[RMDB]
RNA sequence: GGGAACGACUCGAGUAGAGUCGAAAAUAGUAACGGCGAGCGAACCGGGACCAGCCCAGCUUGAGAAUCGGGUGGCUUCGUCACCUGAAUUGUAGUCUGGAGAGGCGUCCUCAGCGACGGACCGGGCUCACAAAAAUUUCUUCGGAAAUUUUUGUGAAAAAGAAACAACAACAACAAC
Reactivity to 2A3 in 0.01 (KOAc 150mM, MgCl2 10mM, bicine 150mM(pH8.5), 24C), signal-to-noise 3, nucleotides 027 to 126: u130a010g080u040a080a030c010g040g010c020g000a040g020c020g010a080a010c000c040g020g000g020a040c010c030a040g050c000c000c010a010g000c020u090u060g100a030g090a160a110u020c000g000g000g000u010g000g000c020u180u110c210g020u000c020a000c000c000u000g040a070a030u050u050g070u050a040g050u040c010u020g050g020a090g040a070g120g010c050g030u010c010c000u110c060a070g020c080g080a080c010g000g010a010c000c010g020g040g000c010
Reactivity to DMS in 0.01 (KOAc 150mM, MgCl2 10mM, bicine 150mM(pH8.5), 24C), signal-to-noise 2, nucleotides 027 to 126: u040a090g020u010a060a050c070g000g000c020g000a210g040c060g010a110a090c100c120g000g010g030a090c030c050a110g010c040c040c000a040g020c040u000u010g010a060g000a110a090u000c030g000g020g020u000g010g000c030u040u040c200g020u010c000a020c000c010u000g000a030a070u000u030g000u010a060g000u010c020u020g000g000a100g000a110g030g000c070g020u000c020c020u010c040a100g000c050g000a060c010g000g000a100c010c000g000g000g000c050
The data come from the RNA Mapping Database (RMDB), library RFM100.
The record gives the reactivity of an RNA of 177 nucleotides to 2A3 and DMS.
Values cover nucleotides 27 to 126.
For DMS, 3,846 sequencing reads were counted.
DMS adducts were read by reverse transcription with MarathonRT.
The RNA was probed in 150 mM KOAc, 10 mM MgCl2 and 150 mM bicine (pH 8.5) at 24 C.